Chemical mapping of a 177-nucleotide RNA with 2A3 and DMS.

[RMDB]
RNA sequence: GGGAACGACUCGAGUAGAGUCGAAAAGUCCGUGCGAAGUCGUAAGACGAUGUAUACGGACUGACGCCUGCCCGGUGCUGGAAGGUUAAGAGGACCGGUUAGCCAGUAAUGGCGAAGCUGAGAAUUUCGAAGCAUUAUUCUUCGGAAUAAUGCUUCGAAAAGAAACAACAACAACAAC
Reactivity to 2A3 in 0.01 (KOAc 150mM, MgCl2 10mM, bicine 150mM(pH8.5), 24C), signal-to-noise 2, nucleotides 027 to 126: g000u000c000c000g000u020g040c000g090a100a000g040u000c000g020u070a140a050g080a010c010g020a030u150g020u000a080u010a030c000g000g000a000c000u000g000a050c010g120c000c010u050g000c050c030c000g050g020u020g030c000u000g040g080a130a060g170g000u040u080a100a020g110a050g110g030a020c000c000g000g000u100u120a020g020c000c000a000g000u140a150a120u040g000g000c020g000a130a060g010c090u030g070a040g040a300a190u030u010u000
Reactivity to DMS in 0.01 (KOAc 150mM, MgCl2 10mM, bicine 150mM(pH8.5), 24C), signal-to-noise 1, nucleotides 027 to 126: g000u000c000c010g080u000g010c020g000a180a300g030u000c000g010u090a160a110g030a050c020g000a100u010g010u020a100u000a010c030g000g000a030c000u000g010a080c140g000c000c020u000g000c010c030c000g030g000u010g010c020u000g000g010a130a090g000g010u020u020a030a100g050a150g010g000a000c030c030g000g000u000u000a220g000c000c000a010g000u060a120a160u000g000g000c020g010a130a050g000c070u020g000a080g000a250a210u000u000u020
Conditions: 150 mM KOAc, 10 mM MgCl2 and 150 mM bicine (pH 8.5), 24 C. The 2A3 profile rests on 653 reads. The data come from the RNA Mapping Database (RMDB), libraries RFM100 and RFMREP. For DMS the reverse transcriptase was MarathonRT.